RNA sequence: GGGAACGACUCGAGUAGAGUCGAAAAACCGGAGGCCGACAAUCCAGGGAACCGAAUGUCAUCACGUUGUUGCAGUACCAGAUGGCAUCUUAAAUCCGAUCUGCAAAUAAGCAUGUAGAAAGCUGAUAAAAUCACACACACUUCGGUGUGUGUGAAACAUAGGAAUAGCGUUCGCGCUAUUCCUAUGAAAAGAAACAACAACAACAAC
Reactivity to 2A3 in 0.01 (KOAc 150mM, MgCl2 10mM, bicine 150mM(pH8.5), 24C), signal-to-noise 3, nucleotides 027 to 156: a010c000c000g010g050a030g040g060c070c050g040a050c040a020a040u050c030c020a060g000g000g040a080a040c060c040g030a060a030u020g020u010c010a000u010c010a020c180g060u050u030g040u060u030g030c040a030g030u050a070c020c050a050g010a020u010g010g000c000a010u010c050u080u200a130a160a050u030c030c020g040a080u000c010u020g020c010a010a050a040u120a050a030g040c060a030u070g010u060a060g130a100a110a020g000c040u030g060a010u140a080a140a010a030u010c000a000c000a000c010a000c000a000c000u020u100c250g050g000u000g000u010g000u000g000u000g000a000a000a000
Reactivity to DMS in 0.01 (KOAc 150mM, MgCl2 10mM, bicine 150mM(pH8.5), 24C), signal-to-noise 3, nucleotides 027 to 156: a140c040c010g010g000a100g050g000c000c010g030a080c060a090a130u000c060c040a070g020g010g000a110a130c030c020g020a090a020u000g030u000c010a040u020c040a250c180g000u000u010g030u000u000g010c030a060g030u000a040c030c040a100g000a060u000g020g000c010a020u000c050u000u000a060a090a100u000c030c010g000a140u000c020u000g000c030a040a080a150u000a070a100g010c050a080u000g010u000a080g010a060a080a110g000c040u000g000a130u000a030a050a100a130u000c000a020c020a010c000a000c000a020c000u010u000c300g080g060u020g030u000g030u010g010u000g000a030a040a120